Chemical mapping of a 177-nucleotide RNA with DMS.
[RMDB]
RNA sequence: GGGAACGACUCGAGUAGAGUCGAAAAUAUAUAUAGAUCGUUCUUUUAACGAACACGCGCGGGUCGUCGGUGGUCGGCGAGCCCACGGACGAACUUACUCGCGCGAACGAGUAAAAAUCGCCAGGAACCUAGCCUUAAUGUUCGCAUUAAGGCUAGGAAAAGAAACAACAACAACAAC
Reactivity to DMS in 0.01 (KOAc 150mM, MgCl2 10mM, bicine 150mM(pH8.5), 24C), signal-to-noise 1, nucleotides 027 to 126: u010a100u000a180u000a110u010a120g030a100u000c020g000u000u000c060u000u000u000u030a040a160c070g010a070a010c080a120c070g020c030g000c010g010g000g010u000c020g000u000c010g020g030u010g000g000u000c040g000g010c030g020a060g000c280c010c000a000c010g010g000a010c000g020a150a100c150u000u030a120c000u000c000g020c020g020c030g000a020a020c060g000a040g010u000a010a060a070a040a000u000c000g040c000c000a230g000g010a100a140

Annotation
The RNA was probed in 150 mM KOAc, 10 mM MgCl2 and 150 mM bicine (pH 8.5) at 24 C.